Chemical mapping of a 177-nucleotide RNA with DMS.
It was measured as part of the RMDB library TTRDES.
For DMS the reverse transcriptase was MarathonRT.
Values cover nucleotides 27 to 126.

[RMDB]
RNA sequence: GGGAACGACUCGAGUAGAGUCGAAAAGAUAUGGAGCGAUGGAGAUCGAUAAGCUGCAGUCGGAAACGACUGUCAGCUUUUGACGAUUGACAUCGCUCCUAAGUCAAAAGGUAAGUUCGCUUACCAAGUCCGUAAACAUGUUCGCAUGUUUACGGACAAAAGAAACAACAACAACAAC
Reactivity to DMS in 0.01 (KOAc 150mM, MgCl2 10mM, bicine 150mM(pH8.5), 24C), signal-to-noise 2, nucleotides 027 to 126: g000a000u020a300u000g060g030a000g060c000g000a000u000g000g000a300g010a030u000c010g030a210u000a010a010g000c000u000g010c000a030g000u000c000g000g000a180a130a120c000g000a030c000u000g000u020c000a010g010c000u000u000u000u000g020a220c220g040a020u010u010g000a300c020a000u000c010g040c000u010c000c000u000a010a070g000u000c040a040a060a100a100g000g010u060a000a000g010u010u020c260g020c000u000u000a010c010c000a080a200